[RMDB]
RNA sequence: GGGAACGACUCGAGUAGAGUCGAAAAGUAUAGUAGGAGAUCGCUGCAGCCCACUUAGGCUACUUCUUUAAAUAUUCUAGCAGAUACUAAGCCGCAGCGUUGGUACAGAUAGCUGUUAAAUCUGCCAAUGAGAAAACAUGUUCGCAUGUUUUCUCAUAAAAGAAACAACAACAACAAC
Reactivity to DMS in 0.01 (KOAc 150mM, MgCl2 10mM, bicine 150mM(pH8.5), 24C), signal-to-noise 4, nucleotides 027 to 126: g000u000a070u010a110g020u010a060g010g000a120g010a100u000c040g030c010u000g010c020a110g010c050c030c040a210c090u000u000a060g020g010c030u000a050c030u010u000c050u010u010u020a040a090a110u010a090u000u000c040u000a070g010c010a020g010a060u010a100c080u000a040a100g000c080c080g020c010a010g010c030g020u010u000g020g000u010a070c090a030g010a090u010a050g010c050u010g000u000u010a060a060a050u000c010u000g000c030c120a070
Reactivity to 2A3 in 0.01 (KOAc 150mM, MgCl2 10mM, bicine 150mM(pH8.5), 24C), signal-to-noise 2, nucleotides 027 to 126: g040u030a050u160a280g080u060a060g060g100a090g020a080u090c030g000c020u010g000c000a040g050c010c020c000a020c040u030u120a020g050g000c000u030a040c030u040u110c000u080u260u090a180a200a120u200a110u100u100c060u050a020g020c010a000g010a070u060a140c010u020a040a020g040c040c030g000c050a010g000c020g000u010u050g010g030u060a040c020a000g000a100u070a060g030c000u040g030u140u090a080a100a030u040c010u010g000c030c000a060

Notes:
Structure probing data (DMS and 2A3) for a 177-nucleotide construct. The reactions ran in a buffer of 150 mM KOAc, 10 mM MgCl2 and 150 mM bicine (pH 8.5), at 24 C. For DMS, 3,642 sequencing reads were counted.